Structure probing data (DMS and 2A3) for a 177-nucleotide construct.

RNA sequence: GGGAACGACUCGAGUAGAGUCGAAAAGCGAUGGGAUUGUUGCAGACCUUGAUGACUGACGGGCCCGGUCCCGAGGGCACCGAUGUGCCGCGCUGGAGGCAGUUAUUGCAUCAGGCCAGCGAAGAUAACCAGUAAAUGAGUUCGCUCAUUUACUGGUAAAAGAAACAACAACAACAAC
Reactivity to DMS in 0.01 (KOAc 150mM, MgCl2 10mM, bicine 150mM(pH8.5), 24C), signal-to-noise 7, nucleotides 027 to 126: g000c110g010a070u010g010g010g010a110u000u000g010u010u000g020c060a050g010a120c080c030u010u000g020a090u010g000a090c060u000g010a120c080g000g000g010c010c020c020g020g000u010c010c020c020g020a090g000g000g010c020a040c010c230g010a110u000g010u010g010c010c010g000c050g010c040u000g010g000a200g000g010c020a050g010u000u010a070u010u000g020c030a090u000c090a100g010g010c010c010a010g000c020g000a100a080g010a150u010a090
Reactivity to 2A3 in 0.01 (KOAc 150mM, MgCl2 10mM, bicine 150mM(pH8.5), 24C), signal-to-noise 2, nucleotides 027 to 126: g080c030g040a080u080g000g020g060a070u060u110g090u090u120g050c000a010g020a140c020c010u090u080g060a080u080g050a090c040u030g020a030c020g010g030g000c020c000c040g020g050u030c010c000c010g070a060g010g010g030c040a040c040c030g040a030u140g020u030g050c000c020g010c010g000c030u030g020g020a050g060g000c010a020g020u110u170a200u230u170g020c000a040u040c050a060g110g030c020c010a010g000c000g000a020a010g050a040u160a040